Chemical mapping of a 177-nucleotide RNA with DMS and 2A3. For 2A3 the reverse transcriptase was SuperScript II with manganese. The RNA was probed in 150 mM KOAc, 10 mM MgCl2 and 150 mM bicine (pH 8.5) at 24 C.
RNA sequence: GGGAACGACUCGAGUAGAGUCGAAAAGAUAUGGAUGUCACGCUAGCGAGGGAAGUCGGAAACGACUUCCUACCCACCGCUAGAACUACGGGACAUCCUAAGUCAAAGGUACCCUUCGGGGUACCAAGGUAUUAAAAACGUUCGCGUUUUUAAUACCAAAAGAAACAACAACAACAAC
Reactivity to DMS in 0.01 (KOAc 150mM, MgCl2 10mM, bicine 150mM(pH8.5), 24C), signal-to-noise 2, nucleotides 027 to 126: g000a050u000a140u020g000g000a010u000g020u010c000a070c000g000c010u010a000g010c000g020a110g030g000g010a020a010g010u010c000g000g000a050a030a110c010g020a020c000u000u000c010c000u000a000c010c040c160a300c050c010g000c020u000a010g000a030a020c070u000a130c040g000g010g010a030c000a000u000c000c000u010a010a030g010u000c020a090a080a130g000g010u000a000c000c000c000u000u000c150g010g010g000g000u000a000c000c000a010a040
Reactivity to 2A3 in 0.01 (KOAc 150mM, MgCl2 10mM, bicine 150mM(pH8.5), 24C), signal-to-noise 1, nucleotides 027 to 126: g030a040u110a080u120g000g000a020u000g000u010c000a000c110g040c010u020a010g000c000g010a020g000g000g000a010a000g000u000c010g040g030a040a020a000c000g010a010c010u000u000c000c000u020a020c000c020c000a030c000c000g000c010u010a010g040a060a020c100u270a090c070g280g090g000a000c000a000u000c000c000u000a030a010g020u020c070a180a000a130g010g010u010a000c000c020c000u020u040c300g070g000g000g000u010a000c000c000a010a020
DMS adducts were read by reverse transcription with MarathonRT. It was measured as part of the RMDB library TTRDEL. High DMS reactivity at an A or C suggests that its Watson-Crick edge is free.